[RMDB]
RNA sequence: GGGAACGACUCGAGUAGAGUCGAAAACAGCCGCGGCAGCAUGCCUGCUUCCAUCAGCGAUGCAGCUGCAGCAGAGACCUGGGCCCAUAUGCAGGUGGCAUGUGCGGGGAUGCCAGCAGAGUUUGGCACUAAUGCGUUACUUCGGUAACGCAUUAGUAAAAGAAACAACAACAACAAC
Reactivity to DMS in 0.01 (KOAc 150mM, MgCl2 10mM, bicine 150mM(pH8.5), 24C), signal-to-noise 4, nucleotides 027 to 126: c100a140g000c040c030g020c030g000g000c010a070g010c020a040u000g000c100c090u010g000c030u000u000c080c120a120u000c150a070g010c040g010a060u000g020c030a090g010c040u000g010c030a040g010c010a070g000a150g000a090c110c030u000g000g000g010c030c050c020a100u010a050u010g010c040a070g000g020u010g010g020c060a030u000g020u000g010c050g010g010g020g020a100u000g010c000c000a040g000c050a130g020a120g010u000u000u000g010g020c090
Reactivity to 2A3 in 0.01 (KOAc 150mM, MgCl2 10mM, bicine 150mM(pH8.5), 24C), signal-to-noise 3, nucleotides 027 to 126: c020a000g080c010c000g010c020g060g030c010a010g000c010a080u070g090c000c050u040g000c000u170u060c110c070a220u130c070a030g030c030g100a040u070g000c010a000g020c020u040g000c010a010g030c010a010g030a000g020a090c010c020u050g020g050g040c040c000c010a110u120a080u130g030c030a020g000g160u020g070g010c040a040u070g040u050g070c070g000g030g000g000a020u080g030c000c010a020g000c040a010g040a030g220u050u120u130g020g010c020
Record summary:
The data come from the RNA Mapping Database (RMDB), library OK2TRN. An RNA of 177 nucleotides, treated with DMS and 2A3 and read out base by base. For DMS, 5,778 sequencing reads were counted. DMS adducts were read by reverse transcription with MarathonRT. For 2A3, 4,646 sequencing reads were counted.